[RMDB]
RNA sequence: GGGAACGACUCGAGUAGAGUCGAAAACUGUGUCGACUCACACGGAAUCGUCGGGUCUUAUGUGUUUGGAUAAGACUUGACUAAACUUAACAAACUCGCUUAAUGUGAUCCCUGCUGGCCGGGCAGCAUUAAGUUAAAAUAAUAGACCAAAUAAACACUAUUACGACUAGUUCGCUAGUCGUAAUAGAAAAGAAACAACAACAACAAC
Reactivity to 2A3 in 0.01 (KOAc 150mM, MgCl2 10mM, bicine 150mM(pH8.5), 24C), signal-to-noise 5, nucleotides 027 to 156: c070u050g020u030g040u110c080g080a090c040u060c070a030c010a010c030g100g070a080a130u120c080g010u000c000g010g000g000u000c000u000u000a000u000g060u000g000u000u010u030g010g000a000u000a010a000g000a000c000u000u020g020a000c010u080a040a080a050c070u110u270a050a000c000a010a000a000c010u000c000g000c000u010u010a000a000u010g040u080g120a300u300c010c000c010u010g010c000u000g000g000c020c000g000g000g000c010a000g000c000a000u000u000a000a010g000u000u000a010a000a010a040u270a030a020u010a010g010a000c000c000a020a040a060u170a060a090a000c070a010